Structure probing data (2A3 and DMS) for a 207-nucleotide construct. For DMS the reverse transcriptase was MarathonRT.

[RMDB]
RNA sequence: GGGAACGACUCGAGUAGAGUCGAAAAGUACAGCGUGAGUAUCCUCAUGUGCUGGAGAUGGUCGACGUGGAACAGUUCACCUUCAGCAACGUCUGUGAAUCGGUAGUUAAGUUCCGGCGGCUAGGCGAGACGGAACGUCGGCUCUACGACUACUGCGUCAUGAGUCCAAGUUCGCUUGGACUCAUGAAAAAGAAACAACAACAACAAC
Reactivity to 2A3 in 0.01 (KOAc 150mM, MgCl2 10mM, bicine 150mM(pH8.5), 24C), signal-to-noise 4, nucleotides 027 to 156: g090u080a020c010a020g000c030g000u010g040a050g040u200a150u170c070c000u070c020a070u130g040u060g060c000u010g040g000a030g010a060u100g000g070u080c050g020a050c040g090u150g040g140a100a030c010a070g010u070u070c020a020c030c000u020u050c030a020g000c050a110a060c020g050u020c030u040g040u060g050a070a140u090c030g020g010u020a020g020u060u070a090a030g010u000u000c000c000g010g010c000g030g000c050u050a070g050g110c040g020a040g040a060c030g020g060a100a020c010g010u000c010g000g000c000u010c000u040a050c080g020a000c020u020a020c000u050g050c030g090
Reactivity to DMS in 0.01 (KOAc 150mM, MgCl2 10mM, bicine 150mM(pH8.5), 24C), signal-to-noise 1, nucleotides 027 to 156: g020u010a080c000a080g010c040g030u000g010a110g010u010a120u000c100c040u010c020a160u020g030u000g060c000u020g010g000a070g000a090u010g010g030u000c000g010a110c020g020u010g000g030a150a090c100a120g010u000u000c010a040c000c020u000u010c040a060g020c000a100a030c040g030u000c020u000g020u000g030a040a120u000c040g010g000u000a090g000u000u000a110a120g010u010u010c000c000g010g020c030g000g050c060u000a110g020g020c020g020a280g010a140c040g010g000a040a030c060g040u000c000g070g010c020u010c050u010a040c080g020a060c010u000a040c040u000g000c180g010
Conditions: 150 mM KOAc, 10 mM MgCl2 and 150 mM bicine (pH 8.5), 24 C.